Overview:
Structure probing data (2A3 and DMS) for a 170-nucleotide construct. It was measured as part of the RMDB library 15KLIB. The reactions ran in a buffer of 150 mM KOAc, 10 mM MgCl2 and 150 mM bicine (pH 8.5), at 24 C. As a SHAPE reagent, 2A3 marks flexible, mostly unpaired nucleotides at the ribose 2'-OH. The 2A3 profile rests on 52,196 reads. For 2A3 the reverse transcriptase was SuperScript II with manganese. For DMS, 19,483 sequencing reads were counted.
RNA sequence: GGGAACGACUCGAGUAGAGUCGAAAAACGUUGAUAUGGAUUUACUCCGUGGAGACGAACUACCACGAACAGGGGAAACUCUACCCGUGGCGUCUCCGUUUGACGAGUAAGUCCUAAGUCAACAUGCAUCGGUACGAGUUCGCUCGUACCAAAAGAAACAACAACAACAAC
Reactivity to 2A3 in 0.01 (KOAc 150mM, MgCl2 10mM, bicine 150mM(pH8.5), 24C), signal-to-noise 8, nucleotides 027 to 129: a000c100g000u000u000g000a000u000a000u020g000g000a000u000u000u000a010c000u000c040c050g100u260g010g000a010g010a000c000g000a010a020c060u230a070c020c010a000c000g020a040a020c040a080g000g010g010g000a000a000a000c000u000c000u010a030c030c010c000g000u000g000g000c000g000u000c000u000c010c010g020u120u090u120g050a020c010g000a000g000u000a000a000g000u000c000c000u000a000a000g000u000c000a000a000c010a010u120g050c010a100u100c110
Reactivity to DMS in 0.01 (KOAc 150mM, MgCl2 10mM, bicine 150mM(pH8.5), 24C), signal-to-noise 2, nucleotides 027 to 129: a040c130g000u020u020g000a030u000a050u000g020g020a000u040u000u040a000c030u020c060c030g000u170g020g010a000g030a000c050g030a010a000c070u130a270c000c020a000c020g030a070a190c110a140g000g000g000g000a000a050a000c000u000c020u000a110c300c100c000g000u000g030g000c020g010u040c000u030c030c010g000u080u060u090g060a070c220g000a040g040u020a000a000g020u050c000c000u030a010a050g000u010c010a000a000c010a070u000g040c130a070u080c120